[RMDB]
Source: RMDB library OK1LIB, as collected in RNAgym. Structure probing data (2A3 and DMS) for a 177-nucleotide construct. 2A3 adducts were read by reverse transcription with SuperScript II with manganese. The RNA was probed in 150 mM KOAc, 10 mM MgCl2 and 150 mM bicine (pH 8.5) at 24 C. For 2A3, 1,337 sequencing reads were counted.
RNA sequence: GGGAACGACUCGAGUAGAGUCGAAAAGAAAGAAAGAAGCCGGAUUCUCUAGAUUCGAAUUGACCACUGAGAAUCUUGAGAGUGGUCUAUAGAUACGACGCGCGAAAAGCGCGGAACGGCGAAGAAAGGGUUCUAAUAUCUUCGGAUAUUAGAACCCAAAAGAAACAACAACAACAAC
Reactivity to 2A3 in 0.01 (KOAc 150mM, MgCl2 10mM, bicine 150mM(pH8.5), 24C), signal-to-noise 2, nucleotides 027 to 126: g080a010a030a000g070a010a070a020g050a070a000g000c020c000g000g070a060u030u000c020u000c010u030a050g000a060u000u050c010g070a100a100u070u160g040a070c010c010a040c060u040g000a030g070a300a180u090c000u090u030g040a050g050a000g010u000g000g040u030c010u050a110u040a040g040a010u050a080c040g010a030c000g060c010g060c000g090a210a040a070a020g020c000g000c000g000g000a010a000c010g000g000c050g010a030a010g100a020a030a030
Reactivity to DMS in 0.01 (KOAc 150mM, MgCl2 10mM, bicine 150mM(pH8.5), 24C), signal-to-noise 2, nucleotides 027 to 126: g000a130a140a160g000a110a150a090g000a160a260g020c000c000g000g020a060u020u000c000u000c000u000a040g000a070u010u000c000g000a230a190u020u030g040a070c130c060a020c140u000g000a300g000a050a040u000c090u010u010g010a070g000a030g000u010g000g000u000c000u000a100u000a070g000a040u030a090c030g000a280c000g000c010g020c010g030a180a080a080a130g000c030g010c020g000g000a010a030c010g000g000c000g020a120a030g010a070a110a150